[RMDB]
RNA sequence: GGGAACGACUCGAGUAGAGUCGAAAAUCACACGAGUUCGCUCGUGUGAAAAUAAUAGUCCCUAGAAAACGAUCAAAACUAGCGACAUACAUAACGAUCGAAAAACGCCUGGCUUCGGCCAGGCGAACUAGUCUUAAGACUUCGGUCUUAAGACUAGAAAAGAAACAACAACAACAAC
Reactivity to DMS in 0.01 (KOAc 150mM, MgCl2 10mM, bicine 150mM(pH8.5), 24C), signal-to-noise 2, nucleotides 027 to 126: u000c000a000c010a000c000g000a020g000u000u030c250g020c000u000c000g020u010g000u010g000a010a010a090a050u010a110a080u010a120g000u010c000c010c000u000a160g000a070a070a070a090c080g000a010u010c020a090a060a130a130c120u000a090g000c110g000a090c130a080u030a020c130a060u010a030a100c150g000a070u010c000g000a100a060a020a110a210c010g000c000c000u000g000g030c000u010u010c190g010g010c000c000a000g010g010c000g010a000a020
Reactivity to 2A3 in 0.01 (KOAc 150mM, MgCl2 10mM, bicine 150mM(pH8.5), 24C), signal-to-noise 2, nucleotides 027 to 126: u030c000a000c000a000c010g000a000g020u080u060c110g110c080u000c010g000u040g010u020g000a000a000a000a000u020a000a010u030a040g070u010c010c000c000u010a020g100a020a080a000a050c020g000a010u020c030a020a080a030a160c060u090a100g140c010g200a130c040a120u230a030c010a060u100a200a050c080g020a020u040c020g040a140a030a030a020a020c000g000c000c020u000g040g030c020u040u040c150g030g030c000c020a000g030g000c010g000a000a000